Structure probing data (2A3) for a 207-nucleotide construct. Reactivities are given for positions 27 through 156. The reactions ran in a buffer of 150 mM KOAc, 10 mM MgCl2 and 150 mM bicine (pH 8.5), at 24 C. It was measured as part of the RMDB library OK3TST.
[RMDB]
RNA sequence: GGGAACGACUCGAGUAGAGUCGAAAAUCAAGUGAAAGUCACGCUCACUCACACCUACUACCUGCCAAAGGAUGAUGCCAAAACUAGUCAAUUCCUAGAACAGAUUGACGCUUACAAGCGACCUUCUGAAGUGGCUAAGGAUCAGAGGCAAAGAAGACCCAUCCGUCUUUUUCGAAAGACGGAUGGGAAAAGAAACAACAACAACAAC
Reactivity to 2A3 in 0.01 (KOAc 150mM, MgCl2 10mM, bicine 150mM(pH8.5), 24C), signal-to-noise 2, nucleotides 027 to 156: u150c010a020a020g020u020g160a130a030a090g070u090c010a000c100g080c020u020c030a040c000u080c000a170c010a010c010c010u060a120c020u030a090c030c060u030g000c010c000a000a000a050g000g000a020u020g010a050u030g060c040c030a020a150a000a070c050u060a010g000u010c000a020a100u180u070c000c030u030a020g040a100a020c010a000g000a000u020u010g040a030c020g000c020u140u300a060c100a190a000g020c000g030a050c010c010u000u010c010u020g060a190a060g090u090g020g000c040u060a120a080g060g040a010u050c020a000g000a000g030g040c020a060a050a030g080a040a000g000a050